Chemical mapping of a 207-nucleotide RNA with 2A3. The RNA was probed in 150 mM KOAc, 10 mM MgCl2 and 150 mM bicine (pH 8.5) at 24 C.
RNA sequence: GGGAACGACUCGAGUAGAGUCGAAAAAGGCAGUGGUCCGACUUACGAGUCGGACCACUGACAUGGCAGCUGGAUCCAGCCAGGCGGUGUAUCGCCAAACCCAGCCAAUCAAUCUACCCACCGGGAAUACAGAAAGCGAACUUCGGUUCGCUUUCAAGUAAACAUCUACGUUCGCGUAGAUGUUUACAAAAGAAACAACAACAACAAC
Reactivity to 2A3 in 0.01 (KOAc 150mM, MgCl2 10mM, bicine 150mM(pH8.5), 24C), signal-to-noise 1, nucleotides 027 to 156: a010g060g000c000a000g000u000g000g020u000c000c000g000a000c020u100u100a050c180g080a000g000u000c000g030g000a040c000c000a000c000u000g000a000c000a020u010g010g000c020a020g000c020u000g000g000a120u110c090c010a010g000c030c010a020g000g000c000g000g030u140g070u200a220u180c000g000c000c000a000a000a050c000c000c000a000g030c030c020a020a060u230c020a020a090u020c010u060a080c020c010c010a110c130c040g020g000g030a090a040u130a090c070a120g000a010a020a000g010c000g000a000a000c000u050u060c210g130g000u000u000c000g010c000u000u020u000c000a000a000